[RMDB]
RNA sequence: GGGAACGACUCGAGUAGAGUCGAAAACGCAGAGGGUUCUGAUAACAAAGAACCUAGAUAGCCGCAUCGGUAUUAUAGGAUGUAGUCGGUGAGCCGGAAUGCAUGCAUCGUAAGCCUAUAAGUAAAUUUAAGUGUAAUCACUUCGGUGAUUACACAACUGAUACUAUACGUUCGCGUAUAGUAUCAGAAAAGAAACAACAACAACAAC
Reactivity to 2A3 in 0.01 (KOAc 150mM, MgCl2 10mM, bicine 150mM(pH8.5), 24C), signal-to-noise 6, nucleotides 027 to 156: c060g020c040a030g040a070g090g010g000u010u000c000u020g070a090u080a250a050c030a020a100a010g000a000a000c000c000u010a020g020a060u060a010g050c060c050g070c100a100u130c080g060g000u100a050u130u030a030u100a050g020g020a040u050g080u120a030g090u080c020g010g030u010g020a020g020c020c040g090g070a070a020u120g020c040a020u050g040c000a010u020c020g050u070a050a030g010c010c010u030a040u020a090a040g070u110a030a110a180u140u190u110a160a040g000u000g000u000a000a000u000c000a000c000u020u040c160g060g010u000g000a000u000u000a000c000a000c000a000a010
Reactivity to DMS in 0.01 (KOAc 150mM, MgCl2 10mM, bicine 150mM(pH8.5), 24C), signal-to-noise 3, nucleotides 027 to 156: c090g010c070a100g010a230g000g010g020u000u000c000u010g000a160u010a120a180c300a140a200a060g000a010a010c000c010u000a030g030a120u010a130g000c020c040g040c060a060u010c040g000g000u000a050u000u000a040u000a050g000g010a080u010g030u000a090g020u000c020g040g000u010g020a160g010c010c070g000g010a140a170u010g010c030a060u000g010c000a040u000c000g020u000a080a110g030c000c010u000a050u000a030a060g020u010a050a060a150u000u000u010a100a170g020u000g000u000a010a000u000c000a010c000u010u000c300g060g000u010g000a020u000u000a020c000a010c000a020a050

The record gives the reactivity of an RNA of 207 nucleotides to 2A3 and DMS. DMS adducts were read by reverse transcription with MarathonRT.